[RMDB]
RNA sequence: GGGAACGACUCGAGUAGAGUCGAAAAGCCGUCAGCUUGGCGGCAUCCAUGGCCCGCGCCUGCCGCAGCGCUUCCUUGGCCAUGCGCGUGGCCUCUGGCGACAGCCCGCCGUCGUCGGGGUAGGGCGGCUGACGAGACGUUUCGACGUCUCGUCAGCAAAAGAAACAACAACAACAAC
Reactivity to 2A3 in 0.01 (KOAc 150mM, MgCl2 10mM, bicine 150mM(pH8.5), 24C), signal-to-noise 2, nucleotides 027 to 126: g040c020c000g000u020c010a160g150c240u180u180g010g000c000g000g000c000a000u000c000c010a100u080g050g000c000c000c000g020c050g000c010c020u110g010c050c030g030c060a100g010c040g000c000u110u080c020c050u120u180g030g000c000c030a020u110g010c000g000c000g070u060g000g000c000c000u010c010u020g010g020c010g000a030c020a070g020c010c030c060g050c030c020g020u040c020g020u020c010g010g000g010g010u100a160g020g020g000c000g010
Reactivity to DMS in 0.01 (KOAc 150mM, MgCl2 10mM, bicine 150mM(pH8.5), 24C), signal-to-noise 1, nucleotides 027 to 126: g000c000c000g000u010c000a040g010c300u080u030g030g000c000g020g020c000a000u000c020c000a020u010g020g000c000c000c090g030c110g050c000c040u030g080c090c000g000c130a020g040c220g000c050u000u000c060c040u000u050g020g010c050c060a070u040g000c000g020c040g000u000g000g000c040c030u000c000u000g000g030c020g010a010c000a270g050c020c090c040g000c000c160g000u020c000g000u000c000g000g000g000g080u030a030g030g000g000c090g010